[RMDB]
RNA sequence: GGGAACGACUCGAGUAGAGUCGAAAAGAUGUCAUUUGGUAAGGCUAUAUCAGGUGGCACUACAGGUACUAUGUCGCAUCAUGGUGCUUGUGAACUCGUAGCUUGAUGCGACAAGUUAUGAGUGAUCUAUUUUACUAUAGCCUUAGUGAGAUAGAGAGCAUUAGUAUCCGUUCGCGGAUACUAAUGCAAAAGAAACAACAACAACAAC
Reactivity to DMS in 0.01 (KOAc 150mM, MgCl2 10mM, bicine 150mM(pH8.5), 24C), signal-to-noise 2, nucleotides 027 to 156: g010a080u010g010u000c010a030u000u010u000g040g040u000a030a060g010g030c040u000a020u000a030u010c010a030g020g010u000g000g020c040a050c030u000a070c070a090g020g010u000a060c080u020a080u000g020u000c110g010c090a080u000c060a100u000g020g020u000g000c020u030u000g040u000g020a080a070c050u000c050g000u000a050g000c020u000u010g000a100u010g030c140g010a070c030a010a030g000u000u000a040u020g000a100g010u000g000a120u010c010u000a020u020u000u000u000a000c010u000a020u000a020g000c060c040u010u000a020g010u000g010a020g000a020u010a030g000a060g010a260
Reactivity to 2A3 in 0.01 (KOAc 150mM, MgCl2 10mM, bicine 150mM(pH8.5), 24C), signal-to-noise 5, nucleotides 027 to 156: g100a050u030g000u010c000a020u010u000u020g010g020u030a020a020g030g000c020u030a020u000a010u070c010a000g000g010u000g000g010c030a000c010u140a090c030a060g090g070u130a040c020u070a120u090g020u010c020g010c030a020u020c000a020u070g090g040u060g050c010u100u100g060u090g130a110a070c050u020c060g030u030a040g070c010u020u010g000a010u030g000c000g010a010c010a000a000g010u030u060a120u130g060a030g060u060g050a040u010c010u010a020u010u010u020u010a000c010u010a000u010a020g010c010c000u000u000a000g010u010g010a020g010a010u030a030g040a000g010a000